[RMDB]
An RNA of 177 nucleotides, treated with DMS and 2A3 and read out base by base. The DMS profile rests on 1,723 reads. For 2A3 the reverse transcriptase was SuperScript II with manganese. The data come from the RNA Mapping Database (RMDB), library OK2TST.
RNA sequence: GGGAACGACUCGAGUAGAGUCGAAAAGACGUCGACGCCACCGAGCGCGUCAACGAUCAAUGCGAAACCGAGUAAACCGAUUUCGGCAUAGUGGUCGACGGUGACGCCGGUGAGAUCGGCGACCGUAUAAAUCACUCGUGUUCGCACGAGUGAUUUAAAAAGAAACAACAACAACAAC
Reactivity to DMS in 0.01 (KOAc 150mM, MgCl2 10mM, bicine 150mM(pH8.5), 24C), signal-to-noise 3, nucleotides 027 to 126: g010a290c020g030u010c020g050a030c040g000c300c000a040c060c020g000a200g010c080g030c040g010u000c010a090a250c000g000a030u000c010a040a010u000g000c020g000a010a040a030c000c010g010a110g000u010a040a140a240c110c010g000a030u010u000u000c010g030g010c030a020u000a090g020u020g000g000u000c010g000a040c300g010g010u010g020a060c000g000c030c010g000g010u000g010a110g010a100u000c010g000g000c000g010a080c000c000g010u000a090
Reactivity to 2A3 in 0.01 (KOAc 150mM, MgCl2 10mM, bicine 150mM(pH8.5), 24C), signal-to-noise 2, nucleotides 027 to 126: g040a020c010g000u020c010g000a030c100g090c070c000a030c040c010g040a120g100c080g000c000g020u000c010a010a030c010g050a010u010c000a040a020u010g010c010g020a010a000a000c010c000g000a030g060u300a100a190a120c090c020g050a070u020u010u030c040g200g030c040a020u050a080g250u080g050g000u020c050g010a070c080g020g070u040g000a080c000g010c020c000g000g010u040g040a120g000a080u050c000g000g010c000g000a020c000c000g030u100a070